[RMDB]
RNA sequence: GGGAACGACUCGAGUAGAGUCGAAAAGGCUCCAAGUUCGCUUGGAGCCAAAAAGCGUACUACGACAUGGUGUGACCAGUUCCCAGUCCCAAAUAGGACUGAACACUGGUUCACACCAACAGCGUAUCGCAAAAACCCGAUUCUUCGGAAUCGGGAACGUAUAGCAUACGUUCGCGUAUGCUAUACGAAAAGAAACAACAACAACAAC
Reactivity to DMS in 0.01 (KOAc 150mM, MgCl2 10mM, bicine 150mM(pH8.5), 24C), signal-to-noise 1, nucleotides 027 to 156: g020g050c000u010c000c000a010a020g000u000u010c300g020c010u010u000g020g020a020g020c000c000a000a000a020a030a030g050c010g000u000a070c130u000a000c010g020a050c040a300u000g000g020u010g040u000g000a050c000c000a000g030u010u000c110c010c000a040g000u000c000c000c000a070a110a170u020a090g010g000a030c000u000g000a020a040c080a020c010u000g000g020u000u000c020a020c020a010c020c000a010a010c110a210g000c060g000u000a060u000c030g050c000a090a120a080a060a120c000c010c010g000a020u000u000c000u000u010c290g020g000a030a000u000c020g020g020g020a000a010
Reactivity to 2A3 in 0.01 (KOAc 150mM, MgCl2 10mM, bicine 150mM(pH8.5), 24C), signal-to-noise 3, nucleotides 027 to 156: g020g040c000u010c000c000a000a000g000u070u060c120g020c190u000u030g000g030a000g040c010c000a020a000a020a030a000g010c060g050u110a050c030u040a020c020g150a060c060a130u130g010g010u000g000u000g000a000c010c000a010g000u040u030c050c020c000a000g000u000c010c000c030a190a300a080u300a100g000g000a000c010u000g050a100a010c060a000c090u010g010g000u090u110c000a000c000a000c000c000a000a000c000a000g000c000g000u010a040u300c030g000c020a060a070a000a010a000c000c000c000g010a000u000u000c000u030u060c280g170g000a000a000u000c010g000g010g010a010a030

Structure probing data (DMS and 2A3) for a 207-nucleotide construct. In probing experiments dimethyl sulfate is read out at A N1 and C N3, which are open when not base-paired. For 2A3 the reverse transcriptase was SuperScript II with manganese. The DMS profile rests on 2,417 reads. The reactions ran in a buffer of 150 mM KOAc, 10 mM MgCl2 and 150 mM bicine (pH 8.5), at 24 C.